[RMDB]
Chemical mapping of a 177-nucleotide RNA with DMS. For DMS, 3,268 sequencing reads were counted.
RNA sequence: GGGAACGACUCGAGUAGAGUCGAAAAUGGUGCCCGUUCGCGGGCACCACCUCGUGGUUAGGGCCACGUUUAAUAGUUGCUUAAGCCCUAAGCGUUGAUAAAGAUGCGCGAAAUUCGUUUCGCGCAACUUUCUUGGUGAUUUCGAUCACCAAGAAAGAAAAGAAACAACAACAACAAC
Reactivity to DMS in 0.01 (KOAc 150mM, MgCl2 10mM, bicine 150mM(pH8.5), 24C), signal-to-noise 3, nucleotides 027 to 126: u000g020g010u010g030c000c000c000g040u000u010c200g030c010g030g010g020c010a000c000c000a020c020c020u000c020g040u000g000g010u000u000a020g000g010g010c010c000a130c190g020u000u020u000a080a110u000a120g010u000u000g000c070u000u000a170a200g000c010c010c000u000a020a030g000c080g000u010u010g000a080u020a090a070a120g000a110u000g000c000g010c000g000a010a010a030u000u010c160g000u000u000u000c000g000c000g000c010a010a030
For DMS the reverse transcriptase was MarathonRT. Source: RMDB library M2PK50, as collected in RNAgym.